[RMDB]
An RNA of 177 nucleotides, treated with DMS and 2A3 and read out base by base. DMS adducts were read by reverse transcription with MarathonRT. The 2A3 profile rests on 52,328 reads.
RNA sequence: GGGAACGACUCGAGUAGAGUCGAAAAGGCCAGCCGAAGUACUGGAAGUGCUGCACCGUACGCUGUGGCUCCUCCCCGCGGGGCAGGGCCUCGCGGGCGCAGGGUGUACAUCGCCUGCAGGGCUGUCCAGAUAGAUUAUAUUCGUAUAAUCUAUCUGAAAAGAAACAACAACAACAAC
Reactivity to DMS in 0.01 (KOAc 150mM, MgCl2 10mM, bicine 150mM(pH8.5), 24C), signal-to-noise 9, nucleotides 027 to 126: g010g010c030c010a040g010c050c020g010a120a080g020u000a070c040u000g000g000a110a060g010u000g010c020u000g000c020a040c130c080g010u010a060c080g010c070u000g010u000g010g000c020u000c010c010u000c030c000c000c000g010c020g010g000g000g020c030a170g030g020g010c000c000u000c010g010c010g000g000g010c130g010c120a010g010g000g000u000g010u000a050c040a040u000c110g000c070c040u000g000c020a060g000g000g000c010u000g000u000c070
Reactivity to 2A3 in 0.01 (KOAc 150mM, MgCl2 10mM, bicine 150mM(pH8.5), 24C), signal-to-noise 9, nucleotides 027 to 126: g040g000c020c010a000g010c030c040g180a140a020g030u100a060c050u090g050g090a110a030g030u030g060c030u020g010c020a020c040c040g030u050a030c040g000c030u030g010u020g060g000c000u010c000c000u010c000c000c000c000g000c010g000g010g010g000c060a250g140g270g010c010c000u000c000g000c000g000g000g000c020g000c030a010g010g040g020u070g010u020a060c020a030u040c040g010c020c010u020g000c010a030g010g040g000c010u030g060u030c030